[RMDB]
RNA sequence: GGGAACGACUCGAGUAGAGUCGAAAAGCGCCCUUCGGGGCGCACAGGGGUCUAUCGUAAGCCCACGAGGAUCGUGGAACUACAUCUGAAGCCUCCACGGAUGCCACGGGAGUGGGUAUCGAUAGACGGAGGCACCCGAUUGUCUUAUUCGUAAGACCCAUCUUCUCAAGUUCGCUUGAGAAGAUGGAAAAGAAACAACAACAACAAC
Reactivity to 2A3 in 0.01 (KOAc 150mM, MgCl2 10mM, bicine 150mM(pH8.5), 24C), signal-to-noise 1, nucleotides 027 to 156: g000c000g000c000c000c000u030u040c280g020g000g020g020c010g000c000a010c020a050g030g000g010g010u020c000u000a000u020c000g020u050a220a140g080c020c040c000a000c000g030a230g040g000a000u000c000g000u000g000g040a090a100c110u140a060c270a020u000c000u020g000a010a010g000c000c000u010c000c000a020c010g000g000a000u020g030c000c000a010c000g000g000g000a000g000u010g030g030g010u010a030u030c010g000a000u000a000g020a000c010g000g000a000g000g020c010a010c010c010c000g160a160u070u160g030u000c000u010u030a040u040u140c230g070u080a000a020g010a000c020